Chemical mapping of a 177-nucleotide RNA with 2A3 and DMS. For DMS, 2,399 sequencing reads were counted.

[RMDB]
RNA sequence: GGGAACGACUCGAGUAGAGUCGAAAAGAUAUGGAAACUUAUUAAUCGCCUACCAAUGAUGGAGAUGAAAUUCGGAAACGAAUUUCAUCUCUUGAGGUAGGAACUACGAUGAAUUGUUUCCUAAGUCGCUUGUAUAUUUCUUCGGAAAUAUACAAGCAAAAGAAACAACAACAACAAC
Reactivity to 2A3 in 0.01 (KOAc 150mM, MgCl2 10mM, bicine 150mM(pH8.5), 24C), signal-to-noise 1, nucleotides 027 to 126: g020a020u040a040u070g000g020a000a000a000c000u070u010a020u080u070a230a010u000c000g000c040c000u030a000c020c000a170a020u300g260a200u300g270g000a010g000a010u010g030a010a000a020u030u000c030g010g000a090a000a000c000g020a000a020u000u040u010c000a000u000c000u010c000u000u000g010a000g000g000u000a030g020g000a000a010c000u160a030c050g010a000u010g030a030a050u000u090g000u040u000u030c000c000u010a000a010g030u020c080
Reactivity to DMS in 0.01 (KOAc 150mM, MgCl2 10mM, bicine 150mM(pH8.5), 24C), signal-to-noise 2, nucleotides 027 to 126: g000a040u000a030u010g000g000a020a010a010c000u000u000a010u040u000a190a040u000c000g000c000c020u000a000c000c010a070a090u000g000a050u020g000g000a010g020a020u000g000a000a020a010u000u000c010g010g010a010a010a030c000g010a010a000u000u000u000c010a000u000c000u000c000u000u000g010a300g000g010u010a010g000g010a020a010c110u010a300c020g010a010u010g000a180a160u010u000g010u000u000u000c000c000u000a010a190g000u000c020
The reactions ran in a buffer of 150 mM KOAc, 10 mM MgCl2 and 150 mM bicine (pH 8.5), at 24 C. For DMS the reverse transcriptase was MarathonRT. Reactivities are given for positions 27 through 126. Reactivities are rounded to 0.1 and cut off at 0 and 3. It was measured as part of the RMDB library TTRINS.